Structure probing data (DMS and 2A3) for a 177-nucleotide construct.
RNA sequence: GGGAACGACUCGAGUAGAGUCGAAAACGCUGGAGCCGGUAUUGGGUGAAACCGCUGCACGCGCGGCUCUCUCCAGCAUGGAGGACCUCGGUUCUGCCACCUUCAUCGCGGACAUAAUGGCGAUGAAGAUAUGCUCACCGUUCGCGGUGAGCAUAUCAAAAGAAACAACAACAACAAC
Reactivity to DMS in 0.01 (KOAc 150mM, MgCl2 10mM, bicine 150mM(pH8.5), 24C), signal-to-noise 3, nucleotides 027 to 126: c130g020c000u000g020g000a040g020c120c050g030g030u000a040u010u020g000g000g000u000g000a100a090a130c030c010g010c040u000g030c090a090c220g030c140g030c020g010g010c040u010c100u010c010u000c000c000a080g010c090a150u010g010g000a070g000g010a060c010c010u020c200g020g000u000u000c030u000g040c020c010a130c110c000u000u000c000a000u000c000g020c000g020g000a120c260a130u000a100a110u000g000g010c010g020a010u000g000a010a020
Reactivity to 2A3 in 0.01 (KOAc 150mM, MgCl2 10mM, bicine 150mM(pH8.5), 24C), signal-to-noise 2, nucleotides 027 to 126: c050g000c040u050g020g030a020g110c030c020g140g050u240a270u170u220g120g010g000u060g060a140a020a030c020c010g040c040u060g000c070a060c120g130c000g000c000g030g050c000u000c010u000c000u000c010c030a060g000c040a030u140g010g020a010g020g000a030c010c010u050c120g040g000u020u000c010u040g100c000c000a050c010c000u020u020c000a010u010c000g020c010g010g080a080c030a120u300a170a100u300g130g000c000g000a000u000g000a010a010
For DMS, 2,371 sequencing reads were counted. It was measured as part of the RMDB library OK2TST. The RNA was probed in 150 mM KOAc, 10 mM MgCl2 and 150 mM bicine (pH 8.5) at 24 C. The 2A3 profile rests on 2,233 reads.